[RMDB]
RNA sequence: GGGAACGACUCGAGUAGAGUCGAAAAUCUGCCUGGGGAAGGUAGACGCCUUCGAACAUGCGACCACUGUGCCAAAUGUUCCGGGGAUCCCGUAUAAGGCGUUGGUCGAACGCGCAGGUUACGCGCCCCAUCUUAGCGAAUUCGUUCGCUAAGAUGGAAAAGAAACAACAACAACAAC
Reactivity to 2A3 in 0.01 (KOAc 150mM, MgCl2 10mM, bicine 150mM(pH8.5), 24C), signal-to-noise 4, nucleotides 027 to 126: u010c000u010g020c020c020u070g010g010g020g120a020a050g000g000u020a060g020a030c060g030c010c000u030u070c050g040a060a020c020a040u110g030c020g030a020c010c030a180c200u190g140u280g090c010c010a000a130a140u110g030u090u000c050c010g000g010g000g080a060u060c060c000c000g010u120a250u040a100a080g040g000c070g060u110u110g050g010u040c030g040a100a040c080g010c020g020c040a020g170g000u070u030a040c050g000c010g010c030c020
Reactivity to DMS in 0.01 (KOAc 150mM, MgCl2 10mM, bicine 150mM(pH8.5), 24C), signal-to-noise 6, nucleotides 027 to 126: u000c030u010g010c010c010u010g010g020g000g020a180a040g000g010u000a050g020a070c180g020c010c010u000u000c230g000a050a050c030a020u000g000c300g000a030c000c020a110c220u000g020u010g040c010c020a070a300a040u000g000u000u000c040c050g010g000g010g010a250u010c020c000c000g020u010a080u010a080a110g010g010c020g010u000u000g000g000u000c040g000a070a080c130g000c090g020c020a050g010g010u010u000a070c110g000c080g020c040c130